[RMDB]
RNA sequence: GGGAACGACUCGAGUAGAGUCGAAAAUGGAUCUUCCGUUACUUUCCAGCCCAACGUUGAAGCAGUCAUUGUCCGGUCACUAUGCCAGCACCAUGACACUGGAACAGUUGGAGAAGUUGCCGGAUUCAUCAAAUGGUUUGUUCGCAAACCAUUUGAUAAAAGAAACAACAACAACAAC
Reactivity to DMS in 0.01 (KOAc 150mM, MgCl2 10mM, bicine 150mM(pH8.5), 24C), signal-to-noise 5, nucleotides 027 to 126: u010g010g010a090u010c110u000u000c030c050g020u000u000a080c130u010u000u000c040c040a170g010c050c030c030a060a070c140g010u000u010g030a080a080g010c100a080g000u000c090a080u000u000g010u000c010c010g000g000u000c260a030c040u000a100u030g000c000c000a010g010c040a140c030c020a030u000g010a110c200a120c180u000g000g010a070a080c120a120g000u000u000g000g000a080g010a060a060g010u000u000g020c010c010g010g000a030u000u010c130
Reactivity to 2A3 in 0.01 (KOAc 150mM, MgCl2 10mM, bicine 150mM(pH8.5), 24C), signal-to-noise 2, nucleotides 027 to 126: u060g010g030a010u000c040u090u020c120c010g040u070u080a050c020u040u050u000c000c000a050g030c050c010c030a030a070c040g030u070u070g040a060a010g050c100a060g000u020c040a110u080u120g010u000c010c000g000g010u040c020a010c020u020a020u280g050c000c000a010g020c020a040c000c010a020u120g060a090c040a060c180u020g030g030a180a040c040a120g020u040u020g010g010a060g020a070a020g020u020u020g010c010c010g000g040a040u070u000c000
Conditions: 150 mM KOAc, 10 mM MgCl2 and 150 mM bicine (pH 8.5), 24 C. Structure probing data (DMS and 2A3) for a 177-nucleotide construct. For 2A3, 1,965 sequencing reads were counted.